[RMDB]
RNA sequence: GGGAACGACUCGAGUAGAGUCGAAAAGACGGAAAAGAUCGAACCUAAGAAGAUCAGGAAGUGCGAGCCGAAUCCUAGGGCUCCUAGGGACGCAUCGUCCGAUGCGAAAUAAACACCAACGUCGAAAGCAGCUAAUUUAUUUCGAUAAAUUAGCUGCAAAAGAAACAACAACAACAAC
Reactivity to 2A3 in 0.01 (KOAc 150mM, MgCl2 10mM, bicine 150mM(pH8.5), 24C), signal-to-noise 4, nucleotides 027 to 126: g040a000c030g030g040a140a010a040a070g030a020u030c020g020a060a060c000c030u060a070a040g090a020a070g000a100u070c040a030g040g080a080a020g070u060g100c110g000a000g010c000c010g040a090a040u030c020c010u030a030g000g000g110c010u030c010c010u000a040g000g040g040a000c020g000c010a010u000c040g240u110c120c190g010a010u030g030c010g050a030a020a100u250a040a110a000c050a020c040c020a020a060c010g040u020c030g050a100a050a000
Reactivity to DMS in 0.01 (KOAc 150mM, MgCl2 10mM, bicine 150mM(pH8.5), 24C), signal-to-noise 3, nucleotides 027 to 126: g000a060c010g000g000a100a080a140a140g010a020u000c000g000a110a180c070c100u040a130a130g000a150a080g000a050u010c020a110g010g000a060a090g010u000g000c100g040a020g010c110c050g020a110a060u030c020c000u010a110g020g000g010c040u010c010c020u000a080g000g010g030a210c010g000c020a010u000c000g030u020c210c110g000a040u000g020c000g000a120a040a030u060a030a140a140c140a050c030c050a070a070c070g000u010c020g000a060a110a080
The record gives the reactivity of an RNA of 177 nucleotides to 2A3 and DMS. The 2A3 profile rests on 3,785 reads. The RNA was probed in 150 mM KOAc, 10 mM MgCl2 and 150 mM bicine (pH 8.5) at 24 C. DMS adducts were read by reverse transcription with MarathonRT. The data come from the RNA Mapping Database (RMDB), library OK1LIB.